[RMDB]
RNA sequence: GGGAACGACUCGAGUAGAGUCGAAAAAGAGCCGGAUGCGUCCGGCUCAACGGGGGAUACGUGUGGUGCCGUCCGCUCCCCCUAUGGCAUAACAAAUGCACCACACACUAGGCUACGGCCUAGUGAAAAAAUCCCUACAUGUUCGCAUGUAGGGAAAGCAUUAUAUGACGUUCGCGUCAUAUAAUGCAAAAGAAACAACAACAACAAC
Reactivity to 2A3 in 0.01 (KOAc 150mM, MgCl2 10mM, bicine 150mM(pH8.5), 24C), signal-to-noise 2, nucleotides 027 to 156: a010g000a000g000c010c000g020g000a010u040g040c120g080u010c000c000g000g000c000u000c000a000a000c000g000g000g000g000g000a010u000a100c000g030u030g000u000g030g000u010g000c000c020g020u050c020c050g090c040u020c000c000c000c000c000u020a150u240g090g010c090a110u070a190a040c070a100a070a020u080g000c000a000c010c000a000c000a000c000a000c000u000a000g000g000c000u030a010c250g080g000c010c000u000a010g000u000g020a080a000a000a000a000a010u030c000c000c000u000a000c000a000u010g030u020u030c130g000c130a010u000g000u000a000g000g000g010a000a010a010